[RMDB]
RNA sequence: GGGAACGACUCGAGUAGAGUCGAAAAUUCAUACAACAACUACUCCUUAAUGGCGAUGGCCACACAAGCUGGAGUGCUGUUUGGCAUGGGCAAAGGGAUGCCAUUUAUGCAUGGGGACCUUGGAGUCCCGAGCACAGAACUUCGGUUCUGUGCUCGGAAAAGAAACAACAACAACAAC
Reactivity to 2A3 in 0.01 (KOAc 150mM, MgCl2 10mM, bicine 150mM(pH8.5), 24C), signal-to-noise 3, nucleotides 027 to 126: u050u030c020a020u070a120c070a110a010c030a070a020c010u080a000c000u060c000c000u120u220a040a070u120g040g000c080g090a120u140g230g010c000c000a030c000a020c020a070a050g070c050u120g080g120a040g080u050g020c010u020g000u080u060u000g010g010c020a000u020g020g080g160c100a110a060a150g100g030g010a000u030g070c000c000a020u090u180u110a160u190g040c040a010u060g000g000g000g060a010c040c000u060u100g020g010a100g080u070c000
Reactivity to DMS in 0.01 (KOAc 150mM, MgCl2 10mM, bicine 150mM(pH8.5), 24C), signal-to-noise 2, nucleotides 027 to 126: u010u030c050a080u070a060c100a040a050c080a020a050c050u080a000c000u000c000c040u000u010a030a230u020g000g010c030g020a300u030g010g000c010c000a050c260a140c120a000a140g000c070u000g020g010a110g000u000g030c000u000g000u000u020u020g030g040c030a030u000g030g040g050c100a040a080a020g040g000g020a050u020g040c020c020a030u020u030u040a030u040g000c040a060u030g030g000g010g030a070c000c020u020u020g000g000a110g000u000c060

Source information:
This 177-nucleotide RNA was probed chemically with 2A3 and DMS. Conditions: 150 mM KOAc, 10 mM MgCl2 and 150 mM bicine (pH 8.5), 24 C. Source: RMDB library OK1LIB, as collected in RNAgym. Values cover nucleotides 27 to 126. For DMS the reverse transcriptase was MarathonRT.